[RMDB]
Chemical mapping of a 177-nucleotide RNA with 2A3 and DMS.
The data come from the RNA Mapping Database (RMDB), library OK2TST.
Values cover nucleotides 27 to 126.
For DMS, 4,022 sequencing reads were counted.
For 2A3, 2,917 sequencing reads were counted.

RNA sequence: GGGAACGACUCGAGUAGAGUCGAAAACGGCUAUGCUGGCGUCCAAAAUCCAUUGUUCUUCAAAGACAAUACUCAGAUGUUAUUUGGCGAUGCUAAAGACAGCGUGGAAGCCAUUUUACGCGCGUUGCGCAUACGACUGGUUCGCCAGUCGUAUGCGAAAAGAAACAACAACAACAAC
Reactivity to 2A3 in 0.01 (KOAc 150mM, MgCl2 10mM, bicine 150mM(pH8.5), 24C), signal-to-noise 3, nucleotides 027 to 126: c010g010g000c020u020a020u120g000c030u020g040g000c010g020u020c000c020a080a080a030a030u070c040c040a020u010u050g070u080u050c010u150u130c080a130a110a080g020a040c000a020a030u070a080c050u090c140a040g020a130u060g050u090u070a290u100u040u030g030g000c100g120a120u200g010c030u040a020a040a030g020a020c040a030g000c020g060u030g030g010a050a000g020c000c000a040u060u080u020u040a090c110g060c030g000c020g040u070u160g060
Reactivity to DMS in 0.01 (KOAc 150mM, MgCl2 10mM, bicine 150mM(pH8.5), 24C), signal-to-noise 4, nucleotides 027 to 126: c040g020g020c010u000a040u010g030c100u000g010g010c010g040u000c030c030a050a060a130a110u020c180c130a040u000u010g000u010u010c020u000u000c270a140a140a150g010a040c010a010a020u000a070c120u000c190a120g010a080u010g000u000u000a110u000u010u000g010g000c020g020a130u020g010c040u010a020a040a060g000a040c030a040g010c050g010u000g010g000a030a050g000c030c030a050u000u000u010u000a040c180g010c030g000c030g020u000u010g010